[RMDB]
An RNA of 177 nucleotides, treated with 2A3 and DMS and read out base by base.
The data come from the RNA Mapping Database (RMDB), libraries RFM100 and RFMREP.
2A3 adducts were read by reverse transcription with SuperScript II with manganese.
The reactions ran in a buffer of 150 mM KOAc, 10 mM MgCl2 and 150 mM bicine (pH 8.5), at 24 C.
For DMS the reverse transcriptase was MarathonRT.
RNA sequence: GGGAACGACUCGAGUAGAGUCGAAAAACGCCAUCUACGGAUGGCGACCCUACUUUUCCGCUUCUAGCUUCCAUUUGCAAAGCAGUAAGUCUCUGAAAAUGGACUAGAAACGUGAAAAAGUUGGUAAUAGAACUAGUAACUUCGGUUACUAGUUCUAAAAAGAAACAACAACAACAAC
Reactivity to 2A3 in 0.01 (KOAc 150mM, MgCl2 10mM, bicine 150mM(pH8.5), 24C), signal-to-noise 5, nucleotides 027 to 126: a000c000g010c000c000a000u000c000u050a040c270g120g000a000u000g010g010c000g000a010c000c000c010u020a030c010u030u010u000u000c000c000g020c020u000u000c000u000a060g030c130u050u010c010c000a000u000u010u040g040c050a080a030a030g020c000a030g030u200a130a050g060u070c020u020c010u020g020a010a000a000a000u000g000g000a010c000u000a000g010a000a000a000c040g130u250g070a050a020a000a000a000g050u090u090g040g040u040a080a060
Reactivity to DMS in 0.01 (KOAc 150mM, MgCl2 10mM, bicine 150mM(pH8.5), 24C), signal-to-noise 3, nucleotides 027 to 126: a180c010g000c000c010a010u000c000u000a110c210g050g010a010u000g000g000c010g030a000c020c000c000u010a020c040u000u000u000u000c010c000g010c030u010u000c000u010a010g000c110u030u000c000c000a010u000u000u000g010c010a020a020a010g010c020a160g000u030a150a140g010u050c010u020c020u000g020a040a000a020a000u000g000g000a050c000u010a000g000a010a000a010c000g000u020g010a030a010a010a010a050g000u000u000g030g020u020a090a170